[RMDB]
RNA sequence: GGGAACGACUCGAGUAGAGUCGAAAAGAUAUGGAUUUGAGGGAGACGAAGCAUACUUCGUUUGACGAAGCUCGGAAACGAGCUUCCGAGAAGUAUGCCUGCGUCGAGGAUCUCAAAUCCUAAGUCACAAAGAAACCAACUUCGGUUGGUUUCUUUGAAAAGAAACAACAACAACAAC
Reactivity to DMS in 0.01 (KOAc 150mM, MgCl2 10mM, bicine 150mM(pH8.5), 24C), signal-to-noise 1, nucleotides 027 to 126: g010a010u000a300u010g010g000a000u000u000u010g020a010g000g000g020a020g020a010c000g030a270a100g000c000a010u000a050c000u000u000c000g010u020u010u010g030a240c300g010a030a000g040c000u010c000g010g000a080a090a250c020g000a010g000c020u000u010c000c010g030a130g000a020a050g000u000a010u020g010c020c020u000g030c040g040u000c000g010a030g000g010a040u000c000u000c010a010a000a000u000c010c000u010a010a070g000u010c050a300